[RMDB]
RNA sequence: GGGAACGACUCGAGUAGAGUCGAAAAAUAAACCGGAAGCGACGCACCAAGCCCGACCGGAAGGGCAACCGGAAUGCGUAUCUCAACUCGCCCGAGACGCACCUGAGAGACGGGAAUGCGUAAAAAAGUAUAUGUCAGUCUUCGGACUGACAUAUACAAAAGAAACAACAACAACAAC
Reactivity to 2A3 in 0.01 (KOAc 150mM, MgCl2 10mM, bicine 150mM(pH8.5), 24C), signal-to-noise 1, nucleotides 027 to 126: a000u120a030a080a050c020c000g050g020a060a020g070c100g040a000c010g020c010a020c020c020a070a000g020c010c000c020g030a060c010c030g080g020a050a040g030g000g020c020a020a020c030c000g020g000a020a090u090g000c010g010u060a080u030c060u030c030a000a130c030u040c080g060c000c030c040g010a020g010a020c020g000c000a070c040c030u040g030a110g010a030g000a150c090g010g000g010a110a180u150g000c010g040u060a000a000a000a070a000a070
Reactivity to DMS in 0.01 (KOAc 150mM, MgCl2 10mM, bicine 150mM(pH8.5), 24C), signal-to-noise 2, nucleotides 027 to 126: a070u020a010a100a120c050c010g000g000a160a140g040c160g000a050c040g000c010a030c110c160a090a090g010c000c000c010g000a160c050c000g000g040a130a060g000g000g000c070a030a090c110c070g000g000a130a070u010g010c010g000u000a070u000c050u000c040a030a130c110u010c080g010c020c010c050g010a130g010a060c030g010c030a040c000c010u000g000a170g010a110g010a080c100g010g010g000a040a030u020g010c030g000u050a000a040a020a100a040a050

An RNA of 177 nucleotides, treated with 2A3 and DMS and read out base by base.
2A3 adducts were read by reverse transcription with SuperScript II with manganese.
High 2A3 reactivity points to a flexible backbone, as in loops and unpaired stretches.
Conditions: 150 mM KOAc, 10 mM MgCl2 and 150 mM bicine (pH 8.5), 24 C.